An RNA of 207 nucleotides, treated with 2A3 and DMS and read out base by base. The data come from the RNA Mapping Database (RMDB), library OK3TST. The RNA was probed in 150 mM KOAc, 10 mM MgCl2 and 150 mM bicine (pH 8.5) at 24 C. For 2A3 the reverse transcriptase was SuperScript II with manganese. The DMS profile rests on 2,178 reads.

RNA sequence: GGGAACGACUCGAGUAGAGUCGAAAAGUGAGAGUUUCAUAAGGUACUCUUGACCAACCUUAUGUGUUGAAAAACAGCCUUGUCCAAGAGUCAGGGGACUCUUCCAGAACAUUCAAUUCACCUUUGCCCCAAACAGGCCUACCAGGGCUAAAACAGGCGAAAAUACUAAGUUCGCUUAGUAUUUUCGAAAAGAAACAACAACAACAAC
Reactivity to 2A3 in 0.01 (KOAc 150mM, MgCl2 10mM, bicine 150mM(pH8.5), 24C), signal-to-noise 4, nucleotides 027 to 156: g100u110g020a100g010a010g010u030u030u050c040a040u100a110a030g020g010u050a070c010u010c020u110u150g060a070c020c030a010a020c010c010u070u060a050u040g080u030g010u010u040g070a110a060a020a010a010c030a020g050c000c040u030u070g020u080c080c010a030a020g030a030g040u030c070a060g020g000g040g050a040c000u010c030u100u030c050c030a030g070a080a050c020a050u080u250c060a090a140u120u070c020a100c020c030u060u080u150g040c000c000c000c020a030a110a030c030a050g030g040c000c000u010a040c050c050a040g000g020g020c000u010a070a010a000a010c040a010g080g000
Reactivity to DMS in 0.01 (KOAc 150mM, MgCl2 10mM, bicine 150mM(pH8.5), 24C), signal-to-noise 2, nucleotides 027 to 156: g040u120g000a100g020a070g040u010u000u020c030a000u010a080a040g030g030u000a050c020u010c050u000u000g020a180c110c050a120a050c000c010u010u020a050u000g040u020g000u000u010g010a120a130a060a080a120c050a090g000c030c010u010u020g030u000c060c030a040a100g010a070g010u010c030a150g000g040g010g020a090c030u000c040u010u000c060c000a220g010a090a070c030a090u000u010c080a030a120u000u000c060a070c040c040u000u010u000g010c030c000c000c010a060a050a120c090a140g010g040c030c020u000a060c090c090a090g000g020g010c030u000a070a040a090a110c060a090g000g030